Record summary
Conditions: 150 mM KOAc, 10 mM MgCl2 and 150 mM bicine (pH 8.5), 24 C. An RNA of 207 nucleotides, treated with 2A3 and DMS and read out base by base.

RNA sequence: GGGAACGACUCGAGUAGAGUCGAAAAAGCAUAUUUCAGGGCGGUGACUUAAAGUCAACAAGCAGGAUGUUUACUGAAUACAUGAGAGAAUGUUGAUUUUUGUGGAGGAAAAUGUUGCCUCAGAGAGAGGUAACUGGGAUUCAGUAGCAAGCUCCCACAUACGGAGUGCAUUCGUGCACUCCGUAUGAAAAGAAACAACAACAACAAC
Reactivity to 2A3 in 0.01 (KOAc 150mM, MgCl2 10mM, bicine 150mM(pH8.5), 24C), signal-to-noise 2, nucleotides 027 to 156: a000g150c130a140u170a110u130u170u130c040a040g050g040g000c100g000g010u060g010a010c010u080u190a140a050a090g010u040c020a040a020c000a040a090g050c070a040g000g060a060u020g070u110u160u060a010c050u050g040a090a080u110a080c030a130u070g040a090g010a010g030a170a180u100g020u060u110g040a280u060u010u060u040u120g070u070g050g110a100g000g040a040a010a060a040u100g000u000u000g020c000c000u000c030a030g100a010g000a010g000a000g200g000u000a010a000c010u030g010g070g000a050u040u060c030a010g000u010a030g030c050a070a000g010c030u000c020c000c000a030
Reactivity to DMS in 0.01 (KOAc 150mM, MgCl2 10mM, bicine 150mM(pH8.5), 24C), signal-to-noise 2, nucleotides 027 to 156: a090g020c040a080u010a130u000u010u000c010a150g000g010g020c060g030g010u010g020a020c030u000u020a020a070a160g020u000c040a050a030c030a080a140g020c040a090g000g020a100u000g000u000u000u010a280c030u010g000a060a090u000a070c040a070u000g000a130g000a060g010a070a060u010g010u000u020g020a190u000u000u000u000u000g070u000g040g000a110g000g000a050a020a030a080u000g010u000u000g040c000c020u000c000a230g010a230g010a220g000a010g010g020u000a010a000c020u000g010g010g030a050u000u000c080a040g010u000a030g100c050a070a060g070c040u030c020c010c000a150
Background
The DMS profile rests on 2,619 reads. For 2A3 the reverse transcriptase was SuperScript II with manganese. It was measured as part of the RMDB library OK3TST.